Structure probing data (DMS) for a 177-nucleotide construct. The DMS profile rests on 736 reads.

[RMDB]
RNA sequence: GGGAACGACUCGAGUAGAGUCGAAAAGGACGGCGCGGAGCACGGCCUGCUGCUGACCGCCGCACUGCCCACCGACGCGGGGGUCUACGUGUGCCGCGCCCGCAACGCGGCCGGCGAGGCCUACGCGAUCUCGCUGGGUGUUCGCACCCAGCGAGAUAAAAGAAACAACAACAACAAC
Reactivity to DMS in 0.01 (KOAc 150mM, MgCl2 10mM, bicine 150mM(pH8.5), 24C), signal-to-noise 1, nucleotides 027 to 126: g010g000a110c110g040g010c020g120c100g000g000a120g030c050a020c100g030g030c200c100u030g020c130u000g030c100u000g110a100c110c000g040c000c000g040c140a050c060u000g000c040c000c010a170c180c100g000a120c160g010c010g000g000g000g000g000u000c030u000a060c050g020u000g000u020g020c000c000g000c010g010c040c050c090g020c050a120a160c020g000c130g000g000c010c030g000g000c060g010a150g000g000c050c030u000a010c030g000c030g000
DMS adducts were read by reverse transcription with MarathonRT.